[RMDB]
RNA sequence: GGGAACGACUCGAGUAGAGUCGAAAAUAACGGUUAGAUGUCCGCACAACUCCGGACUCGCGGUGAGCGAUACAGCGCAGCGCGAGCAUCGCAGCUGCUGUGCGGACGGCUAGCAAGGGCUAGCCACCAUACGCACGGUCUUCGGACCGUGCGUAUGAAAAGAAACAACAACAACAAC
Reactivity to 2A3 in 0.01 (KOAc 150mM, MgCl2 10mM, bicine 150mM(pH8.5), 24C), signal-to-noise 3, nucleotides 027 to 126: u190a010a090c120g010g090u070u110a040g030a170u160g030u000c000c000g000c000a000c000a070a220c030u090c100c000g040g030a050c010u010c000g000c020g070g220u010g010a050g000c010g050a140u120a300c090a060g000c000g000c010a090g090c030g000c000g000a010g020c050a140u070c020g060c000a010g000c030u200g020c000u010g000u010g000c000g000g000a000c000g000g000c000u000a000g030c040a110a220g150g180g000c000u030a000g000c000c000a010c000
Reactivity to DMS in 0.01 (KOAc 150mM, MgCl2 10mM, bicine 150mM(pH8.5), 24C), signal-to-noise 2, nucleotides 027 to 126: u050a110a210c100g000g000u020u020a030g020a120u030g010u010c010c000g000c030a000c040a060a050c010u000c080c010g010g000a180c010u010c000g000c020g000g000u010g000a090g000c010g020a300u080a130c270a130g020c000g000c010a020g010c000g050c000g000a010g000c150a030u020c040g000c120a120g000c160u010g000c050u000g030u020g010c030g030g010a000c010g010g000c000u020a000g010c000a220a100g000g000g000c000u000a010g010c000c010a050c030